[RMDB]
RNA sequence: GGGAACGACUCGAGUAGAGUCGAAAAGUACUGACUCUCACGUUUGACUGAGAGCGUCCUUGCAAAGUCAAACUAUUACCUUCCUGCUUAAUAGUGGUCAGAACCACGCCAUCCGGGAUGGUACGUGCGGCAUACCACCUUUCGAGGUGGUAUGCCGAAAAGAAACAACAACAACAAC
Reactivity to DMS in 0.01 (KOAc 150mM, MgCl2 10mM, bicine 150mM(pH8.5), 24C), signal-to-noise 1, nucleotides 027 to 126: g000u020a090c050u000g000a190c000u000c000u000c000a140c200g000u000u000u000g090a000c070u000g010a120g020a050g030c240g000u000c110c000u090u150g000c290a080a050a000g010u000c010a000a000a060c080u000a070u000u060a020c000c020u000u020c000c000u010g010c300u060u000a120a000u010a050g080u000g060g000u050c300a180g000a110a170c020c020a000c070g000c250c020a000u000c150c080g000g000g000a000u000g000g000u000a030c050g000u000g010
Reactivity to 2A3 in 0.01 (KOAc 150mM, MgCl2 10mM, bicine 150mM(pH8.5), 24C), signal-to-noise 2, nucleotides 027 to 126: g100u110a060c050u080g090a080c000u000c000u030c000a100c130g010u050u050u070g020a010c000u000g010a000g040a040g090c050g010u090c010c010u090u130g170c100a090a110a010g020u020c000a010a040a030c000u060a060u060u240a040c000c000u000u030c000c000u050g030c050u160u120a090a000u050a220g030u020g060g040u080c190a030g050a110a050c000c040a000c000g020c020c000a000u050c020c040g030g160g000a000u030g000g040u060a080c070g070u070g070
Background:
Chemical mapping of a 177-nucleotide RNA with DMS and 2A3. 2A3 adducts were read by reverse transcription with SuperScript II with manganese. The DMS profile rests on 810 reads. For 2A3, 872 sequencing reads were counted.